[RMDB]
RNA sequence: GGGAACGACUCGAGUAGAGUCGAAAAGCCAACGUGCGCAUGACUGUGCGCUUCGACUACCAGCCGGACAUCUGCAAGGACUACAAGGAAACCGGCUUCUGCGGCUACGGCGACGCGUGCAAGUUUGACAGUCUAUCUUAUUCGUAAGAUAGACUGUAAAAGAAACAACAACAACAAC
Reactivity to DMS in 0.01 (KOAc 150mM, MgCl2 10mM, bicine 150mM(pH8.5), 24C), signal-to-noise 9, nucleotides 027 to 126: g020c010c010a110a130c160g020u010g010c040g010c040a050u000g010a110c130u010g010u000g010c040g010c020u000u000c050g000a080c060u010a100c100c070a050g010c010c010g010g000a090c110a130u000c060u000g000c110a100a120g000g000a120c070u000a070c150a070a120g000g010a060a120a090c030c010g010g000c010u000u000c050u000g000c050g010g010c030u000a050c090g000g010c020g010a060c090g010c030g010u000g000c040a080a090g010u000u000u000g010
Reactivity to 2A3 in 0.01 (KOAc 150mM, MgCl2 10mM, bicine 150mM(pH8.5), 24C), signal-to-noise 7, nucleotides 027 to 126: g070c000c010a040a050c100g100u120g020c050g010c040a050u130g080a270c060u100g010u020g000c000g000c000u030u040c030g030a020c010u060a050c000c040a010g000c000c010g020g030a070c020a130u040c030u040g050c060a100a080g070g020a100c030u100a080c140a110a080g060g000a080a050a030c010c010g000g000c000u030u010c020u040g020c010g040g000c020u030a040c040g000g010c010g020a030c020g000c000g020u040g010c020a080a150g020u040u080u120g060